Source: RMDB library TTRDES, as collected in RNAgym. Structure probing data (DMS and 2A3) for a 177-nucleotide construct. The RNA was probed in 150 mM KOAc, 10 mM MgCl2 and 150 mM bicine (pH 8.5) at 24 C. For 2A3 the reverse transcriptase was SuperScript II with manganese. For DMS the reverse transcriptase was MarathonRT.
RNA sequence: GGGAACGACUCGAGUAGAGUCGAAAAGAUAUGGACCCUGUGUGGAGCUCCAGUGGGUCGGAAACGACCUUGGAGCGUUGAAACACUGGGUCCUAAGUCAAAACAGCAUUGGUUCGCCAAUGCUGAACCUUCCUAAAUCGUUCGCGAUUUAGGAAGGAAAAGAAACAACAACAACAAC
Reactivity to DMS in 0.01 (KOAc 150mM, MgCl2 10mM, bicine 150mM(pH8.5), 24C), signal-to-noise 2, nucleotides 027 to 126: g000a010u000a050u020g000g010a010c000c000c010u000g010u000g040u010g000g000a020g010c000u000c000c000a010g030u030g020g000g040u000c000g020g010a020a020a050c000g010a010c000c000u000u000g000g000a020g030c000g020u000u010g010a270a260a020c010a000c000u000g020g000g030u000c000c000u000a000a080g010u010c010a110a070a140a300c020a010g000c010a010u000u000g020g000u010u000c300g000c000c000a000a000u000g000c000u000g000a020a070
Reactivity to 2A3 in 0.01 (KOAc 150mM, MgCl2 10mM, bicine 150mM(pH8.5), 24C), signal-to-noise 2, nucleotides 027 to 126: g000a000u010a020u050g000g000a000c000c000c030u040g010u010g000u010g050g100a040g000c010u000c000c010a040g170u200g070g090g010u000c030g000g000a020a020a000c000g010a010c000c010u020u010g000g000a000g000c020g000u100u100g000a000a010a000c000a010c000u000g000g010g000u010c000c000u000a010a000g000u000c000a000a010a100a140c000a010g000c020a010u020u000g020g070u130u200c250g080c090c010a010a020u000g000c000u000g000a000a020